An RNA of 177 nucleotides, treated with DMS and 2A3 and read out base by base. The data come from the RNA Mapping Database (RMDB), library M2PK50.
[RMDB]
RNA sequence: GGGAACGACUCGAGUAGAGUCGAAAACCUCCAAACUUCGGUUUGGAGGAAAAGGAGCCAAAAUAACAACGGAAAGGGAAGACGGAACCCAAGUCUAUAAAAAAAGUACCAUGUUCGCAUGGUACAAUCUCUUAAUCAUCUUCGGAUGAUUAAGAGAAAAAGAAACAACAACAACAAC
Reactivity to DMS in 0.01 (KOAc 150mM, MgCl2 10mM, bicine 150mM(pH8.5), 24C), signal-to-noise 3, nucleotides 027 to 126: c000c000u000c010c020a000a000a010c000u000u010c150g030g010u010u000u010g000g000a010g000g000a000a030a100a060g020g010a080g020c020c030a060a060a060a050u010a050a100c110a090a170c100g000g000a060a070a100g000g010g010a080a030g010a020c040g000g010a110a100c060c040c020a060a080g010u020c060u000a090u020a000a000a040a050a080a110a130g010u000a000c000c000a000u000g010u000u010c200g010c000a000u010g000g000u000a000c000a050a060
Reactivity to 2A3 in 0.01 (KOAc 150mM, MgCl2 10mM, bicine 150mM(pH8.5), 24C), signal-to-noise 2, nucleotides 027 to 126: c000c000u000c000c010a000a010a000c010u040u090c170g060g000u000u000u020g000g010a030g000g000a020a000a000a030g070g040a020g050c010c030a010a060a000a150u200a090a040c090a030a050c050g090g000a050a010a030g030g030g000a000a040g030a010c040g020g040a040a060c020c000c000a020a000g030u000c050u080a180u300a080a070a000a000a000a020a020g010u000a000c010c000a000u000g030u000u080c230g000c100a010u000g000g000u000a000c000a000a000